Source: RMDB library RFM100, as collected in RNAgym. The record gives the reactivity of an RNA of 177 nucleotides to 2A3. Reactivities are given for positions 27 through 126. The 2A3 profile rests on 246 reads.

[RMDB]
RNA sequence: GGGAACGACUCGAGUAGAGUCGAAAAUUAAGUAUUAUGUUGUGUUUGCAUAUUGUUCGGGAAACCGAACGCAAGUAACUUAGUUACUUAUUUAACUUCCUGUAUAUUUUUAAACCUAAUUUUGGGUAACAUGGCCUGAUUUCGAUCAGGCCAUGUUAAAAGAAACAACAACAACAAC
Reactivity to 2A3 in 0.01 (KOAc 150mM, MgCl2 10mM, bicine 150mM(pH8.5), 24C), signal-to-noise 1, nucleotides 027 to 126: u280u170a000a000g000u000a000u000u020a020u050g020u000u000g060u000g110u010u000u000g050c050a050u140a130u300u140g060u000u000c000g000g000g000a090a030a000c010c010g000a000a000c000g000c000a020a010g000u030a020a020c000u030u000a020g020u000u000a000c000u000u000a000u000u080u000a110a020c030u000u050c000c000u030g140u160a060u000a050u170u130u060u220u300a080a200a300c000c090u050a030a060u040u240u140u300g000g000g000u000